[RMDB]
RNA sequence: GGGAACGACUCGAGUAGAGUCGAAAAACAAAUUUCCAAGAAAAGAGUUUGCGCGCAACAGUGUCAGAAUCCUCAAUCAUAUUACCCGAAGGGAAAGGUUCUUUUUGGAUACAUUGGAUAACAACUCGGAGGAUGAAGUCUUCGGACUUCAUCCUCCAAAAGAAACAACAACAACAAC
Reactivity to 2A3 in 0.01 (KOAc 150mM, MgCl2 10mM, bicine 150mM(pH8.5), 24C), signal-to-noise 1, nucleotides 027 to 126: a000c000a000a160a040u080u110u020c040c000a080a080g160a040a160a130a000g160a000g000u000u060u000g100c120g000c030g020c030a090a090c000a100g010u000g070u030c000a000g150a000a000u000c000c040u010c010a000a040u070c060a000u000a070u300u120a160c000c080c080g100a010a010g000g130g000a000a150a000g020g040u090u000c070u000u120u000u090u190g010g000a000u060a060c010a010u040u220g010g000a040u100a210a000c040a000a010c030u160c150
Conditions: 150 mM KOAc, 10 mM MgCl2 and 150 mM bicine (pH 8.5), 24 C. Chemical mapping of a 177-nucleotide RNA with 2A3. For 2A3 the reverse transcriptase was SuperScript II with manganese.